This 207-nucleotide RNA was probed chemically with 2A3. The data come from the RNA Mapping Database (RMDB), library M2RFPK. For 2A3, 820 sequencing reads were counted. The RNA was probed in 150 mM KOAc, 10 mM MgCl2 and 150 mM bicine (pH 8.5) at 24 C.
[RMDB]
RNA sequence: GGGAACGACUCGAGUAGAGUCGAAAAGCGCGAAGCGGUGUAGCGUCAUUUUGAUGGCGGUACUAUGAAUUGAUGCAAGGUGUGGAGCGACCUUAAACAGUUCUGGUGGUGCUCUGAAUGGAGUGCUUGAGGCCUCGCCGAUUCGUCGGCGAGGCAAUAGAAACAGCAAGUUCGCUUGCUGUUUCUAAAAAGAAACAACAACAACAAC
Reactivity to 2A3 in 0.01 (KOAc 150mM, MgCl2 10mM, bicine 150mM(pH8.5), 24C), signal-to-noise 2, nucleotides 027 to 156: g070c010g000c030g150a060a010g070c030g050g020u100g020u060a070g040c020g020u010c020a030u000u100u210u300g270a080u050g000g010c010g020g020u000a030c060u020a020u160g040a100a040u100u080g060a040u050g110c060a020a010g010g000u040g010u120g020g000a020g000c000g000a020c000c000u060u060a120a050a010c020a000g020u030u010c000u040g020g080u040g000g000u000g010c000u000c000u030g110a030a030u160g020g000a010g000u020g030c000u010u060g090a080g070g000c000c000u000c020g000c010c000g010a020u000u080c200g050u000c010g040g010c010g000a000g000g000c000a000a010